[RMDB]
RNA sequence: GGGAACGACUCGAGUAGAGUCGAAAACGAUCAGUACGUUCGCGUACUGAUCGGAGCUACUGGAGACAGUAGCCAGUCUAUCUCGUAGCCGGCCCCGGGCUACGUCCGGAAGUACUACCAGCCUGUACUUCAGAUAGACAUGGGGCAUGGCUGGCAACGCCAGCCUCGUAUUCGUACGAGGCUGGCGAAAAGAAACAACAACAACAAC
Reactivity to 2A3 in 0.01 (KOAc 150mM, MgCl2 10mM, bicine 150mM(pH8.5), 24C), signal-to-noise 1, nucleotides 027 to 156: c000g000a000u000c000a030g010u010a000c010g030u020u090c260g000c000g090u020a000c000u000g000a000u000c000g000g000a010g000c010u000a000c000u010g030g010a040g010a010c000a010g010u000a000g000c010c010a010g020u000c020u010a090u010c020u000c000g030u020a000g000c010c050g100g000c000c010c020c040g040g010g000c000u000a020c000g020u010c010c080g110g020a000a010g000u000a000c010u080a150c010c000a000g020c010c010u010g020u000a010c020u000u000c000a000g020a010u030a010g040a000c020a080u080g040g020g000g000c110a090u150g000g000c000u000g000g000c020a070a010